[RMDB]
RNA sequence: GGGAACGACUCGAGUAGAGUCGAAAAAGAGUUGCCUCUGUUCGCGCUAUCGGUUUGCAUCUAAUUCGCUCUCCAAGGUCGAUACAUUCCUUAGAGCCAAGGCACUUAUUAACCAGAGCCUCACUGGCAGAACCUGAUAAUUCGUUAUCAGGUUCUGAAAAGAAACAACAACAACAAC
Reactivity to 2A3 in 0.01 (KOAc 150mM, MgCl2 10mM, bicine 150mM(pH8.5), 24C), signal-to-noise 5, nucleotides 027 to 126: a000g080a020g020u130u080g030c000c010u020c060u040g060u070u130c030g000c010g000c060u040a050u130c040g070g000u010u070u090g010c000a040u020c020u060a080a110u090u080c040g010c020u030c000u010c050c030a040a020g030g000u040c020g020a020u040a150c030a060u040u040c010c000u010u050a060g000a000g050c030c020a020a010g020g000c010a020c020u090u090a120u110u110a080a030c010c010a010g010a010g050c010c000u040c010a050c040u010g030g000
Reactivity to DMS in 0.01 (KOAc 150mM, MgCl2 10mM, bicine 150mM(pH8.5), 24C), signal-to-noise 9, nucleotides 027 to 126: a090g000a070g010u000u000g020c030c020u010c110u000g010u000u010c080g010c050g010c060u000a030u010c150g010g010u000u010u010g020c050a050u000c040u010a110a180u000u000c060g010c040u000c030u010c060c070a070a100g020g000u000c120g010a110u000a060c130a160u000u000c010c010u000u000a060g000a090g020c040c060a050a050g000g010c020a050c050u010u000a140u010u010a090a150c060c020a030g000a090g020c020c010u000c130a130c070u000g010g010